[RMDB]
An RNA of 177 nucleotides, treated with DMS and 2A3 and read out base by base. Values are in units of 0.01, from 0 to 300, in steps of 10. High 2A3 reactivity points to a flexible backbone, as in loops and unpaired stretches. Conditions: 150 mM KOAc, 10 mM MgCl2 and 150 mM bicine (pH 8.5), 24 C. Reactivities are given for positions 27 through 126.

RNA sequence: GGGAACGACUCGAGUAGAGUCGAAAAGAUAUGGACUUAGAACUACUGCGAACGUACGCGAUGAGUCGGAAACGACGAGCGUACAAGCAGCUAAGUCCUAAGUCAAAGACACUGUUCGCAGUGUCAAGAACUAUAGGAGCUUCGGCUCCUAUAGUUCAAAAGAAACAACAACAACAAC
Reactivity to DMS in 0.01 (KOAc 150mM, MgCl2 10mM, bicine 150mM(pH8.5), 24C), signal-to-noise 4, nucleotides 027 to 126: g000a040u000a160u000g000g000a010c000u010u000a000g000a090a040c150u030a300c020u000g000c010g010a140a130c280g010u010a000c010g010c010g000a130u030g010a230g010u000c000g000g000a050a060a120c000g000a010c000g000a100g010c010g020u000a000c010a070a160g000c020a010g010c040u010a030a010g000u000c000c000u000a010a040g000u000c010a060a080a140g000a020c000a010c030u010g010u000u010c200g030c010a030g030u000g010u000c010a090a040
Reactivity to 2A3 in 0.01 (KOAc 150mM, MgCl2 10mM, bicine 150mM(pH8.5), 24C), signal-to-noise 4, nucleotides 027 to 126: g060a020u100a070u180g050g000a000c000u030u010a010g010a220a090c110u180a040c020u190g000c040g150a300a140c190g030u000a000c000g040c010g300a300u290g110a050g040u000c000g040g000a030a050a020c000g020a000c010g020a030g040c000g000u010a010c010a000a040g000c000a000g000c000u020a010a000g000u000c000c010u000a000a000g000u010c020a090a100a020g000a000c000a000c020u000g050u120u110c300g020c180a000g010u030g000u020c000a000a040